RNA sequence: GGGAACGACUCGAGUAGAGUCGAAAAUUCAUGGAGACCCAUCCCACACUGGAUGCCUUACACUGUGACAUCGGCAAUGCCACUGAGUUUGACAAAAUAUUCCAAGAUGAGAUUUGGGAGGUGUCCCCCUCACUAGUAGGUUCGCCUACUAGUGAGGAAAAGAAACAACAACAACAAC
Reactivity to DMS in 0.01 (KOAc 150mM, MgCl2 10mM, bicine 150mM(pH8.5), 24C), signal-to-noise 3, nucleotides 027 to 126: u050u020c080a060u030g000g000a110g010a100c020c030c000a150u000c000c000c030a090c070a120c080u000g000g030a030u000g010c050c020u000u010a060c070a110c070u010g000u020g000a060c030a040u000c170g000g030c150a060a070u010g010c020c000a070c030u020g020a100g020u010u000u010g000a090c200a050a040a090a120u040a080u000u000c000c040a030a040g000a150u010g000a110g000a130u000u030u010g020g000g010a060g020g030u000g000u000c010c000c040
Reactivity to 2A3 in 0.01 (KOAc 150mM, MgCl2 10mM, bicine 150mM(pH8.5), 24C), signal-to-noise 8, nucleotides 027 to 126: u050u040c040a040u090g050g020a100g010a070c030c000c000a090u030c010c010c000a030c000a010c050u050g030g010a030u050g020c000c010u040u040a030c080a010c040u020g010u030g060a020c010a030u040c040g070g030c070a030a060u060g010c000c010a030c020u030g020a020g050u020u100u090g070a050c050a010a140a040a060u190a130u100u020c010c010a050a060g090a150u140g050a040g040a170u090u070u080g020g020g010a020g000g010u050g040u020c010c000c000

Source: RMDB library OK1LIB, as collected in RNAgym.
This 177-nucleotide RNA was probed chemically with DMS and 2A3.
The reactions ran in a buffer of 150 mM KOAc, 10 mM MgCl2 and 150 mM bicine (pH 8.5), at 24 C.
2A3 adducts were read by reverse transcription with SuperScript II with manganese.
For DMS the reverse transcriptase was MarathonRT.
The 2A3 profile rests on 11,133 reads.